[RMDB]
RNA sequence: GGGAACGACUCGAGUAGAGUCGAAAACUUCGCAACUUCGGUUGCGAAGAAUGGCAGCUCGUCCCGGCGCUGGGUUCGGCGGGUUAUAAAACAUAACACAUCACUGGCUACCAUUCGUGGUAGCCAAUCCUUGGUUUAAGUUCGCUUAAACCAAGGAAAAAGAAACAACAACAACAAC
Reactivity to 2A3 in 0.01 (KOAc 150mM, MgCl2 10mM, bicine 150mM(pH8.5), 24C), signal-to-noise 1, nucleotides 027 to 126: c010u000u000c010g000c000a020a000c020u020u060c210g140g020u000u000g000c000g000a000a000g000a010a010u030g010g030c050a020g030c040u000c030g050u070c000c020c000g000g040c010g020c010u090g060g020g040u060u120c000g040g000c020g010g000g000u070u080a120u070a080a140a020a010c070a040u090a110a020c060a000c000a120u090c010a040c140u050g000g000c000u000a000c000c000a000u040u030c220g080u030g010g010u010a000g000c000c000a000a000
Reactivity to DMS in 0.01 (KOAc 150mM, MgCl2 10mM, bicine 150mM(pH8.5), 24C), signal-to-noise 4, nucleotides 027 to 126: c010u010u000c000g010c000a010a000c000u010u010c220g010g020u000u000g010c000g000a000a010g010a070a060u010g010g010c050a080g010c020u000c080g010u010c020c030c020g020g010c060g030c060u010g010g000g020u000u010c070g020g000c080g010g010g010u010u000a060u010a050a070a080a100c170a050u010a040a060c080a080c160a080u020c120a090c210u000g020g000c000u000a010c010c000a040u000u000c210g010u000g000g010u000a000g000c000c000a000a010